An RNA of 177 nucleotides, treated with 2A3 and DMS and read out base by base. The data come from the RNA Mapping Database (RMDB), library OK1LIB. The RNA was probed in 150 mM KOAc, 10 mM MgCl2 and 150 mM bicine (pH 8.5) at 24 C. For 2A3 the reverse transcriptase was SuperScript II with manganese.
RNA sequence: GGGAACGACUCGAGUAGAGUCGAAAAAGAGGAUGAAGGCCCUGCGUCUGUGUGUGCGUUCUUUGCUUCUCUUCGAGGGUCUUCUUCAGCCACCUGGCUGCAUGCGAGAGGCCAAAGAGCACUGGAGCCUAAAUAGCAGUUUCGACUGCUAUUUAGGAAAAGAAACAACAACAACAAC
Reactivity to 2A3 in 0.01 (KOAc 150mM, MgCl2 10mM, bicine 150mM(pH8.5), 24C), signal-to-noise 6, nucleotides 027 to 126: a000g150a040g090g010a060u120g020a050a010g030g010c020c020c010u070g050c040g060u060c080u110g150u020g030u020g020u040g060c040g090u180u030c020u050u050u070g010c010u040u020c010u020c000u120u120c060g030a040g000g000g020u000c000u040u010c000u020u030c030a010g020c010c010a200c060c080u080g020g000c000u030g030c050a050u120g050c080g020a020g000a010g040g000c010c010a030a030a000g040a010g010c030a030c040u050g110g040a050g060
Reactivity to DMS in 0.01 (KOAc 150mM, MgCl2 10mM, bicine 150mM(pH8.5), 24C), signal-to-noise 6, nucleotides 027 to 126: a060g010a140g010g010a070u020g000a050a030g000g000c010c010c020u000g010c110g010u030c060u010g000u000g020u000g010u000g000c040g010u030u020c020u010u010u020g010c010u010u010c000u010c010u000u020c100g000a080g020g010g010u010c010u000u010c040u000u020c010a020g000c010c020a170c190c170u020g000g020c020u000g010c280a090u020g000c200g000a050g000a060g000g010c100c050a020a040a050g000a080g010c030a060c040u010g000g020a170g020